[RMDB]
RNA sequence: GGGAACGACUCGAGUAGAGUCGAAAAGAAGAGAGUCGACGCAAGCGACGAUAACUGCGGAACGGUAACCGUAGUACCGUAAGGUCAUGGCACGCGAAAGCGAAAGAACGAACCAUGCCAUAAGAGACAGUGCAUACCACUUCGGUGGUAUGCACUGAAAAGAAACAACAACAACAAC
Reactivity to DMS in 0.01 (KOAc 150mM, MgCl2 10mM, bicine 150mM(pH8.5), 24C), signal-to-noise 2, nucleotides 027 to 126: g000a140a050g000a000g050a140g120u000c000g000a170c030g060c020a180a140g000c070g030a090c040g040a050u020a060a140c110u000g000c050g000g000a080a020c180g000g000u000a010a110c000c010g020u020a020g000u000a010c030c000g000u000a100a120g000g010u090c010a040u000g010g050c060a100c040g000c130g000a030a050a100g060c000g000a100a100a020g040a090a080c150g030a190a300c010c060a080u000g010c000c000a110u060a030a120g050a060g030a300
Reactivity to 2A3 in 0.01 (KOAc 150mM, MgCl2 10mM, bicine 150mM(pH8.5), 24C), signal-to-noise 1, nucleotides 027 to 126: g170a060a070g120a000g050a020g000u010c050g000a000c000g030c110a010a010g000c020g120a160c030g000a020u140a070a070c010u020g030c000g000g000a180a000c070g000g050u080a040a040c000c000g000u010a000g020u000a030c090c000g040u010a000a130g000g040u090c030a030u000g000g040c050a040c100g000c000g080a070a000a020g000c000g130a060a000a080g230a030a050c160g000a050a050c000c000a000u030g050c000c090a130u160a300a000g010a000g000a000
The data come from the RNA Mapping Database (RMDB), library OK1LIB. The record gives the reactivity of an RNA of 177 nucleotides to DMS and 2A3. The 2A3 profile rests on 791 reads. For DMS the reverse transcriptase was MarathonRT. The reactions ran in a buffer of 150 mM KOAc, 10 mM MgCl2 and 150 mM bicine (pH 8.5), at 24 C.